[RMDB]
Structure probing data (2A3 and DMS) for a 207-nucleotide construct. Conditions: 150 mM KOAc, 10 mM MgCl2 and 150 mM bicine (pH 8.5), 24 C.

RNA sequence: GGGAACGACUCGAGUAGAGUCGAAAAGCAAAUAUUGUCUUAAUUACUUAGGCUAAAAGAAAUAAGUAUUAAAGCGGUACAAGGCAUCGACAUUUGAUACAAAUAUUGAUCAAUGGAUGUCUUAUUUAAACCUCAUCCGGCUUCGGCCGGAUGAGAACCAAUUCAUAUUGUUCGCAAUAUGAAUUGGAAAAGAAACAACAACAACAAC
Reactivity to 2A3 in 0.01 (KOAc 150mM, MgCl2 10mM, bicine 150mM(pH8.5), 24C), signal-to-noise 3, nucleotides 027 to 156: g040c030a030a120a040u130a050u090u130g040u060c000u020u100a120a100u100u070a060c010u030u030a020g060g000c010u120a170a090a050a060g050a030a110a050u040a020a040g020u020a010u060u080a100a100a020g020c020g040g000u050a070c050a080a000g010g000c010a020u000c010g110a080c010a030u080u090u120g030a020u120a060c060a060a210a050u280a180u210u200g020a000u010c020a000a000u000g020g000a000u010g010u000c000u000u020a070u020u120u050a070a060a010c020c000u000c000a000u000c000c110g000g020c020u020u040c130g060g000c000c000g000g000a000u000g000a000g000a000a000
Reactivity to DMS in 0.01 (KOAc 150mM, MgCl2 10mM, bicine 150mM(pH8.5), 24C), signal-to-noise 1, nucleotides 027 to 156: g010c040a140a140a050u000a030u000u000g000u020c000u020u010a000a050u000u000a050c000u000u000a020g010g000c080u030a100a120a170a270g010a130a150a130u010a030a060g000u020a050u000u010a020a020a020g000c020g000g020u000a020c100a060a000g010g000c020a000u000c020g060a080c030a020u000u000u010g020a150u000a120c080a100a080a160u010a150u000u000g000a070u000c020a000a040u000g000g000a060u000g010u020c040u000u010a090u000u020u010a050a050a110c200c000u000c020a030u000c000c000g010g000c000u000u010c300g010g000c050c000g000g000a000u010g000a000g010a030a060
2A3 adducts were read by reverse transcription with SuperScript II with manganese. For DMS, 1,870 sequencing reads were counted.